[RMDB]
RNA sequence: GGGAACGACUCGAGUAGAGUCGAAAAGGUGACCCGCGGGACAGUGCCACAGAAAACAGACCGCCCGGCCGACAGCGGCCGGGUAAGGGUGAAACGGUGGUGUAAGAGACCACCAGCGCCUCGGGUGCGAUACCUGCUGUUUCGACAGCAGGUAUCGAAAAGAAACAACAACAACAAC
Reactivity to DMS in 0.01 (KOAc 150mM, MgCl2 10mM, bicine 150mM(pH8.5), 24C), signal-to-noise 2, nucleotides 027 to 126: g000g000u010g010a080c020c000c010g000c100g000g020g000a100c150a090g050u020g010c030c050a090c010a020g000a020a040a010a040c140a030g000a000c000c010g020c000c000c000g040g010c000c010g040a220c300a270g010c120g020g020c020c010g000g000g000u000a000a010g010g000g030u000g000a010a060a050c110g010g000u000g000g000u010g000u010a090a050g000a300g000a000c000c000a000c000c010a110g010c050g000c010c000u000c020g060g000g000u000g000
Reactivity to 2A3 in 0.01 (KOAc 150mM, MgCl2 10mM, bicine 150mM(pH8.5), 24C), signal-to-noise 2, nucleotides 027 to 126: g030g020u080g050a030c000c010c000g060c070g050g010g010a080c090a200g110u090g200c020c000a060c010a000g120a000a020a020a020c060a010g030a010c000c000g030c000c000c010g010g020c000c010g060a150c050a190g300c070g040g010c020c010g000g000g000u010a000a010g000g000g000u060g020a040a020a000c050g000g000u000g000g000u040g000u000a010a030g000a000g040a030c000c000a000c000c000a010g020c010g000c000c000u030c020g000g060g000u090g010